An RNA of 177 nucleotides, treated with 2A3 and DMS and read out base by base. Reactivities are given for positions 27 through 126. The 2A3 profile rests on 6,099 reads. For 2A3 the reverse transcriptase was SuperScript II with manganese.

RNA sequence: GGGAACGACUCGAGUAGAGUCGAAAAGAUAUGGACCUAUUUCUCCGAUAAGCUGGUAUCGGAAACGAUACCCAGCUUUUGACGGAGGAUAGGUCCUAAGUCAAAACGUACCGGUUCGCCGGUACGACCAAUUCAGAACGUUCGCGUUCUGAAUUGGAAAAGAAACAACAACAACAAC
Reactivity to 2A3 in 0.01 (KOAc 150mM, MgCl2 10mM, bicine 150mM(pH8.5), 24C), signal-to-noise 2, nucleotides 027 to 126: g010a000u010a010u060g010g000a000c000c010u010a030u030u170u250c040u000c000c040g240a270u080a300a010g000c000u030g000g020u000a000u000c000g000g000a020a010a000c010g000a000u010a010c000c080c000a000g000c000u010u010u030u110g210a100c010g000g000a000g020g000a000u000a000g000g000u000c010c010u000a000a000g000u000c010a000a030a020a080c010g010u000a000c000c000g000g050u030u070c300g070c090c000g000g020u000a000c000g000a030
Reactivity to DMS in 0.01 (KOAc 150mM, MgCl2 10mM, bicine 150mM(pH8.5), 24C), signal-to-noise 2, nucleotides 027 to 126: g010a020u000a070u010g000g000a010c000c000u000a000u010u000u020c000u000c000c000g010a130u010a020a010g040c000u000g010g000u000a000u000c010g000g010a010a010a040c000g000a010u000a000c240c080c070a010g000c010u000u000u000u000g010a160c070g010g000a000g010g010a000u010a000g000g000u010c000c000u000a000a060g000u000c000a120a070a080a200c020g000u000a000c000c010g010g010u000u020c240g030c000c000g000g000u000a000c000g010a140

The RNA was probed in 150 mM KOAc, 10 mM MgCl2 and 150 mM bicine (pH 8.5) at 24 C.